This 207-nucleotide RNA was probed chemically with DMS and 2A3.
RNA sequence: GGGAACGACUCGAGUAGAGUCGAAAAAAAUGAAGUCUUUUGCAGCAACUUGCAUGGAGCUGGAGGCCAUUAUUCUAAGUGAAAGUGAUUCAGGAAUGGAAAACCAAACACUGUAUGUUCUCACUCAUAAGUAGGAACUAAGCUAUGAGGACGCAAACCGCUAAAAUAGUUUCGACUAUUUUAGCGGAAAAGAAACAACAACAACAAC
Reactivity to DMS in 0.01 (KOAc 150mM, MgCl2 10mM, bicine 150mM(pH8.5), 24C), signal-to-noise 2, nucleotides 027 to 156: a000a040a080u000g020a070a090g010u010c050u000u000u000u020g000c040a080g040c050a100a070c060u000u010g010c060a110u010g020g000a120g030c020u010g000g040a090g070g020c040c020a090u020u000a070u020u000c060u000a060a110g020u010g000a060a070a080g010u000g020a240u000u000c050a040g020g010a110a110u010g040g010a020a050a110a100c010c020a050a120a130c100a120c010u000g010u020a150u000g020u000u000c000u000c010a040c010u000c090a040u010a040a100g070u000a070g010g050a070a080c040u010a070a120g010c010u000a110u010g020a030g000g010a150c080g000c080a050a060a110
Reactivity to 2A3 in 0.01 (KOAc 150mM, MgCl2 10mM, bicine 150mM(pH8.5), 24C), signal-to-noise 3, nucleotides 027 to 156: a000a000a020u130g020a070a020g020u050c020u000u080u100u100g070c030a030g010c030a060a090c040u160u140g000c030a070u070g080g000a020g020c030u020g020g020a020g010g020c040c030a000u060u090a050u110u060c090u080a090a070g020u020g080a050a050a010g050u040g030a070u060u050c030a010g000g070a030a030u070g040g050a040a040a030a050c020c010a040a060a030c070a010c040u040g040u130a070u110g020u040u010c040u000c020a020c010u030c040a050u030a210a070g050u050a050g010g080a050a060c100u040a080a050g020c030u010a010u040g040a000g010g010a030c000g090c190a170a010a010